[RMDB]
RNA sequence: GGGAACGACUCGAGUAGAGUCGAAAAACACCAAAACUGAAAACGGAAGGCAAUCCUUCCACGACGAUACUUACUUUUCUUUGAUCGUCGUUACUACUGGCAUAGCCACAAAGGAGAACAAACAUGAGCGCGGACACUGACUUCGGUCAGUGUCCAAGCAGCAAUGGCGGUUCGCCGCCAUUGCUGCAAAAGAAACAACAACAACAAC
Reactivity to 2A3 in 0.01 (KOAc 150mM, MgCl2 10mM, bicine 150mM(pH8.5), 24C), signal-to-noise 2, nucleotides 027 to 156: a000c080a060c010c040a040a040a010a080c100u160g050a100a030a070a040c050g000g020a000a020g020g000c070a010a160u210c000c000u000u000c000c010a000c000g000a000c000g000a000u070a190c000u100u020a050c020u090u240u120u140c080u060u070u090g040a000u000c000g020u000c000g010u000u020a030c050u050a040c020u000g010g000c000a170u070a140g010c020c010a030c110a080a080a010g060g070a100g030a060a040c060a120a090a030c080a070u190g050a070g060c080g000c090g030g000a000c000a000c000u020g000a000c000u010u040c110g040g000u000c000a000g000u020g000u000c000c000a000a000

The data come from the RNA Mapping Database (RMDB), library M2RFPK. An RNA of 207 nucleotides, treated with 2A3 and read out base by base. For 2A3 the reverse transcriptase was SuperScript II with manganese. The reactions ran in a buffer of 150 mM KOAc, 10 mM MgCl2 and 150 mM bicine (pH 8.5), at 24 C. The 2A3 profile rests on 1,115 reads.